[RMDB]
RNA sequence: GGGAACGACUCGAGUAGAGUCGAAAAGAAGCGGCGAAAAAUGCGUGUAAAUAAAAGGUCAAUAUGACCUGACAGUGAUACCAAAUUAAAUGGGUCGAAGUCUCGCCAAAAUACGCAACAUAUAGAAGACCUGGUAUAGUUUCGACUAUACCAGGUCAAAAGAAACAACAACAACAAC
Reactivity to DMS in 0.01 (KOAc 150mM, MgCl2 10mM, bicine 150mM(pH8.5), 24C), signal-to-noise 1, nucleotides 027 to 126: g020a100a130g000c180g010g000c000g020a000a080a070a130a030u010g020c050g020u000g000u010a060a070a060u000a030a060a060a000g000g010u000c000a180a120u000a060u020g010a010c000c000u010g000a050c020a060g010u020g000a000u000a080c010c000a000a020a110u020u030a050a120a050u000g000g000g050u000c000g000a040a030g030u010c020u000c030g010c000c020a000a060a140a010u000a040c000g030c000a060a200c160a100u000a070u000a130g000a090a070
Reactivity to 2A3 in 0.01 (KOAc 150mM, MgCl2 10mM, bicine 150mM(pH8.5), 24C), signal-to-noise 1, nucleotides 027 to 126: g100a020a000g180c060g060g100c040g040a040a050a000a000a000u230g020c080g010u060g000u050a040a090a060u130a050a200a000a010g020g010u010c010a010a070u150a200u300g000a000c000c000u000g000a000c040a020g000u050g140a000u180a300c000c000a110a080a030u140u130a020a090a110u130g000g000g000u000c000g020a090a000g030u020c000u000c010g000c000c000a110a160a000a000u070a000c000g000c020a020a020c050a070u220a010u050a150g140a230a030